Overview: Source: RMDB library M2PK50, as collected in RNAgym. Chemical mapping of a 177-nucleotide RNA with DMS and 2A3. Reactivities are rounded to 0.1 and cut off at 0 and 3.

RNA sequence: GGGAACGACUCGAGUAGAGUCGAAAACUUCGCAACUUCGGUUGCGAAGAAUGGCAGCUCGUCGCGGCGCUGGGUUCGCCGGGUUAUAAAACAUAACACAUCACUGGCUACCAUUCGUGGUAGCCAACCUAAUUCCUUAUUUCGAUAAGGAAUUAGGAAAAGAAACAACAACAACAAC
Reactivity to DMS in 0.01 (KOAc 150mM, MgCl2 10mM, bicine 150mM(pH8.5), 24C), signal-to-noise 8, nucleotides 027 to 126: c010u000u000c000g010c000a010a010c000u000u020c180g040g010u000u000g000c000g000a010a000g000a050a050u010g010g010c050a080g010c040u000c040g020u010c070g000c060g010g010c050g020c090u010g010g010g010u010u000c050g010c020c020g010g010g000u000u000a030u000a040a060a090a090c190a060u000a020a030c050a090c140a100u010c130a100c220u000g000g010c000u000a010c000c000a040u000u010c180g020u000g000g010u000a000g010c000c000a010a010
Reactivity to 2A3 in 0.01 (KOAc 150mM, MgCl2 10mM, bicine 150mM(pH8.5), 24C), signal-to-noise 8, nucleotides 027 to 126: c000u010u000c000g000c000a000a000c000u050u070c210g130g010u000u000g000c000g000a000a000g000a010a010u040g020g010c020a020g010c020u030c040g080u060c050g030c040g100g030c030g020c080u180g090g110g000u070u060c010g000c030c030g040g020g010u070u030a120u060a080a140a030a010c060a050u110a060a040c060a000c010a110u130c030a040c150u050g000g000c000u000a000c000c000a010u030u060c220g060u020g000g000u000a000g000c000c000a000a000

2A3 adducts were read by reverse transcription with SuperScript II with manganese. The RNA was probed in 150 mM KOAc, 10 mM MgCl2 and 150 mM bicine (pH 8.5) at 24 C.